An RNA of 177 nucleotides, treated with 2A3 and DMS and read out base by base. It was measured as part of the RMDB library OK1LIB. The RNA was probed in 150 mM KOAc, 10 mM MgCl2 and 150 mM bicine (pH 8.5) at 24 C.
[RMDB]
RNA sequence: GGGAACGACUCGAGUAGAGUCGAAAAGUGGCGACUGAGGUAGCUCGCAGAAACUCCGUUUCGGUAAUGCUGGCACAUUGCAUCAUGUGCUGCCGAAGUCGAUCGUGAUGACAAAUGGAGGCGUUUGAUUACCACGGAGCUUCGGCUCCGUGGUAAUAAAAGAAACAACAACAACAAC
Reactivity to 2A3 in 0.01 (KOAc 150mM, MgCl2 10mM, bicine 150mM(pH8.5), 24C), signal-to-noise 1, nucleotides 027 to 126: g090u010g120g000c000g010a000c030u100g000a010g080g100u020a020g000c010u060c040g200c010a000g080a000a060a010c020u080c090c040g000u000u110u160c050g000g000u100a120a020u110g050c030u070g160g030c020a000c000a060u090u210g000c000a050u010c040a040u180g000u000g000c000u040g010c030c020g000a000a000g010u070c000g000a030u000c010g000u120g050a050u140g090a090c020a000a070a000u110g000g010a040g120g040c020g040u000u050u000g130
Reactivity to DMS in 0.01 (KOAc 150mM, MgCl2 10mM, bicine 150mM(pH8.5), 24C), signal-to-noise 1, nucleotides 027 to 126: g040u070g000g000c000g000a060c000u030g000a300g000g040u000a060g000c040u050c060g000c040a140g000a040a010a110c010u000c090c020g000u000u000u000c000g000g000u010a090a030u000g010c060u040g000g010c060a100c020a000u000u000g010c080a010u020c040a060u000g000u000g060c020u000g000c000c010g020a040a030g010u000c030g000a020u010c010g000u080g000a110u030g000a040c080a150a010a230u000g010g000a010g000g000c060g040u000u000u000g020